[RMDB]
RNA sequence: GGGAACGACUCGAGUAGAGUCGAAAAGGACGGCUAAUUAUACACAUGGUCUCAACUGUAUCUUAUCUGCUGCAGAUACAAGCACGGCGAAGAGUCCAAAAUAAUCUAAAGUCCAAUAAGCCGAUUGCCUCAUUAAUGCCUUCGGGCAUUAAUGAGGAAAAGAAACAACAACAACAAC
Reactivity to DMS in 0.01 (KOAc 150mM, MgCl2 10mM, bicine 150mM(pH8.5), 24C), signal-to-noise 2, nucleotides 027 to 126: g000g040a000c020g030g000c180u030a010a020u000u000a010u000a060c160a220c150a070u050g030g010u000c110u000c000a090a100c050u000g010u000a010u010c000u000u030a140u030c030u000g010c030u000g040c040a000g010a000u000a010c040a000a110g020c300a100c060g000g040c050g000a000a020g000a000g000u000c000c000a000a030a110a120u000a010a000u000c070u010a040a050a090g000u000c000c000a020a060u040a150a060g000c000c070g000a140u050u050g010
Reactivity to 2A3 in 0.01 (KOAc 150mM, MgCl2 10mM, bicine 150mM(pH8.5), 24C), signal-to-noise 5, nucleotides 027 to 126: g040g010a030c020g000g020c030u010a080a090u090u110a100u100a070c210a000c030a110u080g020g000u020c010u010c010a050a080c050u040g000u040a010u030c040u110u130a040u050c040u160g110c080u080g030c090a010g010a050u040a040c010a010a090g020c040a010c070g040g040c030g070a120a020g000a100g030u030c000c010a110a000a000a000u140a010a020u030c090u160a110a030a090g030u010c020c010a000a090u120a100a020g020c010c020g040a020u030u300g040